[RMDB]
RNA sequence: GGGAACGACUCGAGUAGAGUCGAAAACAUGUUGAAGUCAAUCAUCCAGAUGAGAUAAAUACAUUGUUUGAUCCUGCUAUUGUCUAUGCAAAAGGUAGUCGUUUGAUGCAUAUGUUACGCCGUUUUAUUGGUGAUCGUGAUUUUGCCAUUGGCUUAAGAUAAUCACUAGCUUCGGCUAGUGAUUAUCAAAAGAAACAACAACAACAAC
Reactivity to 2A3 in 0.01 (KOAc 150mM, MgCl2 10mM, bicine 150mM(pH8.5), 24C), signal-to-noise 5, nucleotides 027 to 156: c010a010u030g020u010u020g060a110a030g040u010c020a030a130u020c030a040u050c090c110a100g040a110u090g040a070g040a120u110a060a170a010u200a010c030a030u090u180g050u010u020u060g030a050u020c000c010u040g020c050u090a090u130u160g020u050c010u020a040u080g040c030a010a060a030a050g090g030u090a070g040u050c070g060u070u070u120g070a050u060g000c040a040u090a080u150g050u060u050a040c040g000c020c000g030u000u050u090u130a130u100u100g000g010u020g020a040u020c040g070u040g100a100u050u060u040u070g040c040c050a040u090u120g060g020c030u070u090a090a030
Reactivity to DMS in 0.01 (KOAc 150mM, MgCl2 10mM, bicine 150mM(pH8.5), 24C), signal-to-noise 4, nucleotides 027 to 156: c030a080u000g010u000u010g000a300a220g030u010c030a120a140u000c030a100u000c100c150a140g010a090u000g020a120g010a070u000a040a070a190u000a050c020a040u000u010g010u010u000u010g000a110u000c000c050u010g050c030u000a050u010u000g020u000c020u020a070u010g020c030a050a050a110a070g010g020u010a060g040u000c060g030u000u010u000g000a110u000g010c040a080u000a060u000g000u000u010a080c080g020c030c020g010u010u010u010u000a120u030u000g020g010u000g000a050u010c100g020u010g000a180u010u000u000u010g030c020c040a160u000u010g000g020c000u000u010a040a300